RNA sequence: GGGAACGACUCGAGUAGAGUCGAAAAUUGUUCCUUUUUCCUAUGCAUAUACUUCUUUGAGAGUUUGAUCUAAAGAGGCAUAGAGCAUGGGAAAAUGGGGCGAAAAACAAGCACCUUCGGGUGCUUGCUAUGACGUCAUGUUCGCAUGACGUCAUAGAAAAGAAACAACAACAACAAC
Reactivity to 2A3 in 0.01 (KOAc 150mM, MgCl2 10mM, bicine 150mM(pH8.5), 24C), signal-to-noise 2, nucleotides 027 to 126: u050u040g000u000u020c000c010u030u000u000u010u010c000c000u010a010u020g000c000a010u020a010u000a060c010u010u040c020u040u070u170g220a070g000a010g100u210u260u300g130a130u010c010u020a000a000a010g000a000g000g020c010a010u010a010g050a030g000c000a000u000g010g030g000a000a000a000a000u000g000g010g000g020c000g030a110a020a000a000a000c010a000a000g010c000a010c020c000u060u060c240g110g010g000u030g010c010u010u000g000
Reactivity to DMS in 0.01 (KOAc 150mM, MgCl2 10mM, bicine 150mM(pH8.5), 24C), signal-to-noise 1, nucleotides 027 to 126: u010u000g010u000u000c000c020u000u000u000u000u000c000c000u000a000u000g020c000a220u000a000u010a020c000u000u000c010u000u000u010g020a030g020a100g010u000u000u010g000a140u000c000u010a000a000a010g010a030g010g040c020a000u000a020g010a140g020c010a000u000g010g010g000a000a000a000a020u000g000g000g000g020c000g010a020a050a050a070a160c000a020a000g010c000a000c000c000u000u010c160g030g020g020u000g010c000u000u000g010